[RMDB]
The data come from the RNA Mapping Database (RMDB), library VIROID. An RNA of 207 nucleotides, treated with 2A3 and DMS and read out base by base.

RNA sequence: GGGAACGACUCGAGUAGAGUCGAAAAGGGGCAACUCUUCUCAGAAUCCAGCGAGAGGCGUGGAGAGAGGGCCGCGGUGCUCUGGAGUAGAGGCUCUGCCUUCGAAACACCAUCGAUCGUCCCUUCUUCUUUACCUUCUUCUGGCUCUUCCGAUGAGGGUCUUAGAAUAGUUCGCUAUUCUAAGACCAAAAGAAACAACAACAACAAC
Reactivity to 2A3 in 0.01 (KOAc 150mM, MgCl2 10mM, bicine 150mM(pH8.5), 24C), signal-to-noise 5, nucleotides 027 to 156: g030g000g010g010c050a070a080c040u020c000u110u050c030u010c010a050g050a070a070u300c010c000a080g000c090g060a010g000a000g040g020c150g040u030g010g010a000g000a000g010a000g000g000g010c000c020g010c010g000g000u000g000c000u000c000u010g020g000a000g000u010a000g000a000g010g010c030u070c220u300g050c030c000u140u140c010g000a010a010a010c000a020c120c070a010u010c000g040a300u020c010g010u010c000c000c000u040u050c030u070u010c000u000u020u020a000c000c000u010u000c000u010u010c010u000g000g000c010u020c000u020u000c010c010g080a080u110g020a040g060
Reactivity to DMS in 0.01 (KOAc 150mM, MgCl2 10mM, bicine 150mM(pH8.5), 24C), signal-to-noise 1, nucleotides 027 to 156: g000g020g010g090c100a060a090c030u020c020u000u000c040u000c030a000g000a070a060u010c020c030a050g000c160g010a080g030a070g030g050c120g030u000g020g000a070g010a120g010a050g000g050g020c100c030g000c010g000g030u000g050c020u010c030u000g040g040a250g000u000a190g010a070g010g020c000u000c180u000g010c000c020u000u000c000g010a300a190a260c010a060c140c030a000u000c000g010a090u030c030g010u010c000c000c000u010u000c000u010u010c010u000u000u000a030c010c050u000u000c020u000u020c010u020g000g000c030u000c040u000u000c030c050g000a080u000g000a090g020

For DMS, 2,654 sequencing reads were counted.